Structure probing data (DMS and 2A3) for a 207-nucleotide construct.
For 2A3, 1,134 sequencing reads were counted.
Reactivities are given for positions 27 through 156.
It was measured as part of the RMDB library RNAMAK.
Conditions: 150 mM KOAc, 10 mM MgCl2 and 150 mM bicine (pH 8.5), 24 C.
[RMDB]
RNA sequence: GGGAACGACUCGAGUAGAGUCGAAAACCCUCUCUUCGGAGAGGGGUGCCGAUAUGGAUAUGAUCUUGUUGACAUGCUAAUUUACUCGGAAACGAGUAACUUAGCAACAGCAACAAGAGUCAUAUCCUAAGUCUUGGAGUCUAAGUUCGCUUAGAAACCCAAAACUCAUUUUCGAAUGAGUUUUGGGAAAAGAAACAACAACAACAAC
Reactivity to DMS in 0.01 (KOAc 150mM, MgCl2 10mM, bicine 150mM(pH8.5), 24C), signal-to-noise 2, nucleotides 027 to 156: c010c000c010u000c000u010c010u000u000c300g050g020a040g000a030g010g010g000g010u000g030c080c010g000a140u000a180u000g030g020a010u000a020u000g000a070u010c010u000u000g010u010u030g010a090c090a300u000g000c000u000a000a010u000u000u000a010c000u000c000g030g000a160a130a300c010g030a040g010u010a000a000c190u010u000a000g020c000a000a110c020a170g000c020a010a020c000a000a000g000a070g010u000c000a000u000a010u000c000c000u000a020a130g000u010c040u000u010g000g000a150g010u000c010u000a040a060g020u010u010c270g030c010u000u000a000g010a100a100a150
Reactivity to 2A3 in 0.01 (KOAc 150mM, MgCl2 10mM, bicine 150mM(pH8.5), 24C), signal-to-noise 1, nucleotides 027 to 156: c000c010c000u020c010u000c000u060u160c300g120g000a000g000a000g020g000g000g000u020g080c000c020g050a090u020a120u150g000g000a000u000a000u000g010a000u020c000u000u000g000u000u040g060a150c050a100u060g020c000u000a010a020u020u000u010a000c010u000c020g080g000a120a120a040c000g000a000g010u000a010a010c000u000u010a000g000c000a010a000c020a010g030c010a000a000c000a000a000g000a010g010u030c000a000u000a000u040c000c000u010a040a010g010u000c080u070u130g160g090a150g020u010c020u030a050a070g020u040u060c090g130c220u090u120a080g020a210a280a170